This 177-nucleotide RNA was probed chemically with 2A3 and DMS. For 2A3, 1,409 sequencing reads were counted. The reactions ran in a buffer of 150 mM KOAc, 10 mM MgCl2 and 150 mM bicine (pH 8.5), at 24 C.
RNA sequence: GGGAACGACUCGAGUAGAGUCGAAAACUCUGGGCUCCAGGUUAUGAGUGCAGGCUGCGUGGUUUCUGAAAUCCCUUCUCUAACUCGCUGGCAAGUGACCCUCAGCACCUGAGCAAGGCCUGGACAGCAAGAUGAUCUCGUUCGCGAGAUCAUCUUGAAAAGAAACAACAACAACAAC
Reactivity to 2A3 in 0.01 (KOAc 150mM, MgCl2 10mM, bicine 150mM(pH8.5), 24C), signal-to-noise 1, nucleotides 027 to 126: c020u010c020u020g070g020g020c040u030c000c000a030g000g000u030u040a060u080g030a020g040u070g030c050a030g030g010c030u000g010c020g060u110g030g060u050u030u050c050u050g030a020a020a060u060c040c010c000u050u020c050u030c000u010a030a030c010u000c060g000c020u020g050g050c050a110a030g090u030g120a190c020c010c000u000c000a030g000c000a000c010c000u020g010a040g040c130a090a040g080g000c010c010u000g000g020a000c000a010g060
Reactivity to DMS in 0.01 (KOAc 150mM, MgCl2 10mM, bicine 150mM(pH8.5), 24C), signal-to-noise 2, nucleotides 027 to 126: c070u010c030u000g010g030g040c060u020c060c010a030g020g000u000u010a120u010g000a160g000u000g020c060a080g020g020c050u010g010c040g010u020g000g010u000u000u000c020u000g000a000a060a130u000c050c030c060u010u000c030u000c050u000a040a070c030u000c060g000c040u000g040g000c050a060a050g000u010g020a110c080c030c000u000c040a090g000c110a080c020c010u010g000a140g000c160a110a180g000g020c020c010u000g020g020a050c150a080g010
For DMS, 1,683 sequencing reads were counted.